Structure probing data (2A3 and DMS) for a 177-nucleotide construct. The data come from the RNA Mapping Database (RMDB), library OK1LIB. 2A3 adducts were read by reverse transcription with SuperScript II with manganese. The RNA was probed in 150 mM KOAc, 10 mM MgCl2 and 150 mM bicine (pH 8.5) at 24 C.
RNA sequence: GGGAACGACUCGAGUAGAGUCGAAAAAGUGCUUACCAUGCAAGGGGAGAAGAUAACCAUAUCGUCGUACCCCUGAAGGGGCAGUUUAAGGACGGAGAGAAUUUCUACUCCACACUACUGCAUGAGACCAGCGAGAUAGGUUCGCCUAUCUCGCUGGAAAAGAAACAACAACAACAAC
Reactivity to 2A3 in 0.01 (KOAc 150mM, MgCl2 10mM, bicine 150mM(pH8.5), 24C), signal-to-noise 2, nucleotides 027 to 126: a000g070u170g010c060u090u110a080c010c020a060u030g020c050a030a000g000g020g070g000a000g000a130a010g000a010u020a040a180c100c020a120u080a030u300c000g170u000c050g090u090a050c000c000c000c020u020g010a090a080g000g020g030g000c000a000g020u180u190u190a020a080g070g000a010c070g050g000a020g060a000g040a210a140u100u230u050c030u120a290c010u000c000c010a130c090a050c050u110a090c100u000g000c000a050u230g050a060g090a130
Reactivity to DMS in 0.01 (KOAc 150mM, MgCl2 10mM, bicine 150mM(pH8.5), 24C), signal-to-noise 2, nucleotides 027 to 126: a040g000u000g000c020u000u040a260c000c030a090u000g030c100a090a000g000g000g000g040a140g000a180a020g010a000u040a010a140c300c300a130u010a060u030c000g060u000c030g050u030a300c010c000c000c000u020g000a030a110g010g000g050g020c050a060g000u020u060u060a140a090g000g000a140c300g020g000a020g010a110g020a090a160u050u030u010c000u020a090c000u000c000c000a030c300a150c160u020a020c000u000g020c000a030u010g030a100g000a130